[RMDB]
RNA sequence: GGGAACGACUCGAGUAGAGUCGAAAAGAAAUUACGUUUACUUUACACUUCUCAAACCGGGAUCAAGAGAAGCAAAGCAUCCCUCAUAUCCACGAUGGAGGGUGUCGUGGAGUAUACUGUACCAAAAAGAGCGAACACGGCUUCGGCCGUGUUCGAACAAUGGAGUUGCGUUCGCGCAACUCCAUUGAAAAGAAACAACAACAACAAC
Reactivity to 2A3 in 0.01 (KOAc 150mM, MgCl2 10mM, bicine 150mM(pH8.5), 24C), signal-to-noise 4, nucleotides 027 to 156: g050a010a100a010u200u100a030c020g000u000u020u020a020c010u040u020u020a010c010a020c010u010u000c000u010c010a160a180a160c120c120g170g020g010a090u130c100a150a080g000a000g000a010a010g000c050a030a030a000g010c000a040u120c010c040c000u000c020a060u080a070u140c100c080a080c140g030a050u080g080g030a020g000g020g000u010g020u040c030g000u020g000g010a000g000u000a010u010a020c100u150g070u110a080c030c050a050a070a010a040a040g080a030g090c000g000a000a000c000a000c000g020g050c030u080u100c180g050g000c000c000g010u000g000u000u000c000g000a000a000
Reactivity to DMS in 0.01 (KOAc 150mM, MgCl2 10mM, bicine 150mM(pH8.5), 24C), signal-to-noise 1, nucleotides 027 to 156: g010a080a090a110u000u000a050c000g030u000u000u000a000c010u000u000u000a040c050a050c010u000u000c000u000c000a170a150a170c040c050g020g060g010a080u000c070a220a300g010a070g040a020a010g040c130a080a090a200g000c010a040u000c000c010c000u000c010a080u010a050u000c100c090a150c200g000a020u000g000g000a020g030g000g170u000g000u000c000g090u030g000g000a020g020u000a050u000a020c040u010g090u030a130c080c090a150a040a020a160a070g000a130g010c000g000a010a010c020a020c010g000g000c000u000u000c270g100g010c000c000g000u000g040u000u020c000g030a000a070